[RMDB]
RNA sequence: GGGAACGACUCGAGUAGAGUCGAAAAUUGAAGACUCGUAGUGCCGUUCUCCUCGAAAGGAGUUCCUUUUGAUGGCAAAAUAAUGGCUCAACGCGACUGAGUACGAGGUUUUUCGAGGCAGGACUAGAGUAGUGCUCACUUUCGAGUGAGCACUACUAAAAGAAACAACAACAACAAC
Reactivity to DMS in 0.01 (KOAc 150mM, MgCl2 10mM, bicine 150mM(pH8.5), 24C), signal-to-noise 2, nucleotides 027 to 126: u060u060g000a100a120g000a000c020u000c000g010u010a070g000u000g020c130c030g020u000u020c040u000c000c000u000c050g000a020a090a000g000g000a300g000u020u030c020c000u020u000u030u000g000a110u000g020g000c110a010a050a010a140u000a020a000u020g030g000c040u000c040a080a140c130g020c130g040a140c080u000g000a050g040u000a050c000g020a090g020g000u000u000u000u000u000c010g050a070g000g000c180a020g000g000a040c060u000a030g000
Reactivity to 2A3 in 0.01 (KOAc 150mM, MgCl2 10mM, bicine 150mM(pH8.5), 24C), signal-to-noise 2, nucleotides 027 to 126: u130u200g070a060a020g060a010c000u010c000g060u240a000g020u000g100c040c000g020u030u070c040u010c000c000u000c030g190a050a030a000g050g040a050g090u150u210c030c030u120u010u000u080g140a300u200g060g020c060a000a110a000a000u280a090a130u240g050g000c000u000c000a020a190c070g030c010g040a030c010u050g070a010g010u070a090c000g050a180g000g050u000u040u000u170u000c000g010a040g000g000c060a020g050g000a010c000u060a060g070